[RMDB]
RNA sequence: GGGAACGACUCGAGUAGAGUCGAAAACUCCACGCUGGGUAAUGGACGACGGCGGCGUGUGGCGAACAGGGAUACCGGUAGUCAGUGUCUGGAACAUCCCAAGGGGCGGCGGAGCUAGAACCCCGACAAAACGGGCACAAGUUCGCUUGUGCCCGAAUCCAAUUAAUUGCUUCGGCAAUUAAUUGGAAAAAGAAACAACAACAACAAC
Reactivity to 2A3 in 0.01 (KOAc 150mM, MgCl2 10mM, bicine 150mM(pH8.5), 24C), signal-to-noise 1, nucleotides 027 to 156: c000u020c000c000a020c040g080c010u060g000g100g020u080a150a030u110g020g040a030c060g000a000c030g010g030c000g020g020c040g000u050g030u060g030g000c050g000a050a050c060a050g040g000g070a030u060a170c010c050g030g000u070a020g100u040c050a020g030u040g070u130c010u040g060g000a100a110c040a100u040c010c000c010a020a020g030g000g000g000c030g020g000c040g080g080a020g010c010u010a000g030a080a050c010c010c000c000g000a010c060a010a150a020a010c000g000g000g000c000a000c000a000a000g020u020u070c120g100c130u020u020g010u010g000c020c010c000g000a000a000